[RMDB]
RNA sequence: GGGAACGACUCGAGUAGAGUCGAAAACCACACAAUGGAUUAGGGCAAUAUUUCCCAAAGUGUGGCAUGUAUAUUAUUGUGGUGGUCAUUGUGGUGGUGCACAAGUUGAUUUAGAUACACUUUUAAACAUUUGGCUGGGCACAGUGGCUCACGCCUGGGCCAAAUGAAGGUUCGCCUUCAUUUGGCCAAAAGAAACAACAACAACAAC
Reactivity to 2A3 in 0.01 (KOAc 150mM, MgCl2 10mM, bicine 150mM(pH8.5), 24C), signal-to-noise 2, nucleotides 027 to 156: c010c000a000c000a000c000a000a150u110g040g040a050u140u220a220g080g000g020c030a050a130u110a110u220u050u080c010c000c000a050a030a030g020u060g010u000g010g050c010a080u020g110u070a110u030a060u230u060a110u130u240g070u040g000g020u020g000g000u030c050a100u100u060g070u010g020g040u030g040g000u010g050c010a020c000a150a040g050u060u020g060a110u000u000u090a020g030a020u080a040c060a050c040u000u000u060u190a010a260a010c010a110u130u060u200g000g000c020u010g010g010g000c030a040c070a120g100u090g150g000c020u000c010a020c070g000c000c000u040g050